Record summary: This 177-nucleotide RNA was probed chemically with 2A3 and DMS.
RNA sequence: GGGAACGACUCGAGUAGAGUCGAAAAGAAGAAAGGACUAGAGAGUGUCCGAAAGGGAGGGACCGACCGAAAGAAAGCACGAAAUAACUCUCAAAAUAAAAGCGAGCGAGCGAGCGAGUGCGAAAGAGGGUUUCUAUAUCUUCGGAUAUAGAAACCCAAAAGAAACAACAACAACAAC
Reactivity to 2A3 in 0.01 (KOAc 150mM, MgCl2 10mM, bicine 150mM(pH8.5), 24C), signal-to-noise 1, nucleotides 027 to 126: g100a020a040g020a060a080a000g050g000a050c110u250a050g000a000g010a000g300u080g000u040c000c000g000a080a000a000g000g000g000a110g040g000g010a000c000c160g000a020c020c020g100a140a120a030g110a030a010a000g020c010a100c110g040a130a000a000u070a080a030c010u020c060u000c010a000a000a000a110u180a010a100a020a000g000c000g100a060g000c000g060a000g000c000g000a120g000c000g020a070g000u010g000c050g130a000a040a000g180a110
Reactivity to DMS in 0.01 (KOAc 150mM, MgCl2 10mM, bicine 150mM(pH8.5), 24C), signal-to-noise 1, nucleotides 027 to 126: g060a180a060g000a080a020a130g000g020a000c000u040a090g000a000g000a030g020u020g000u000c040c030g000a090a200a090g000g000g040a030g000g000g000a090c010c000g000a100c000c100g000a080a060a090g000a040a030a070g000c010a050c070g000a050a020a010u060a110a060c000u000c000u000c020a110a050a060a110u050a080a030a150a120g020c010g030a000g000c090g000a190g000c050g000a140g000c010g000a110g000u010g000c010g000a000a080a120g020a130

The RNA was probed in 150 mM KOAc, 10 mM MgCl2 and 150 mM bicine (pH 8.5) at 24 C. The data come from the RNA Mapping Database (RMDB), library OK1LIB.